[RMDB]
Chemical mapping of a 207-nucleotide RNA with 2A3. The reactions ran in a buffer of 150 mM KOAc, 10 mM MgCl2 and 150 mM bicine (pH 8.5), at 24 C. Values cover nucleotides 27 to 156.
RNA sequence: GGGAACGACUCGAGUAGAGUCGAAAACAUCUCGACAAGAGGCGGCGAACCUCAGUACUCUUACUCUUUUCUGUAAAGAGGAGACUGCUGGUCCUGCCGCCCAAGUUCGAGCAUGAGCCAAUUCCGAGCGAAGGGAGCGCGGGAGGAAGGAUCAGUACCUAUCGGGGAGGUUCGCCUCCCCGAUAGGAAAAGAAACAACAACAACAAC
Reactivity to 2A3 in 0.01 (KOAc 150mM, MgCl2 10mM, bicine 150mM(pH8.5), 24C), signal-to-noise 3, nucleotides 027 to 156: c020a030u010c000u010c010g010a000c010a070a110g120a120g040g000c000g000g000c000g010a020a010c010c030u030c020a050g010u180a300c020u000c030u060u160a230c010u040c000u060u120u130u130c180u300g270u300a010a000a020g000a000g010g000a000g000a010c000u020g080c040u010g010g000u000c010c040u140g000c000c000g000c010c000c000a010a000g000u040u020c000g000a000g010c020a030u050g010a020g030c000c010a010a050u070u000c030c040g080a040g000c040g040a070a070g070g030g000a020g000c030g000c060g010g030g020a010g000g030a040a020g030g030a060u100c040a010g080u070a090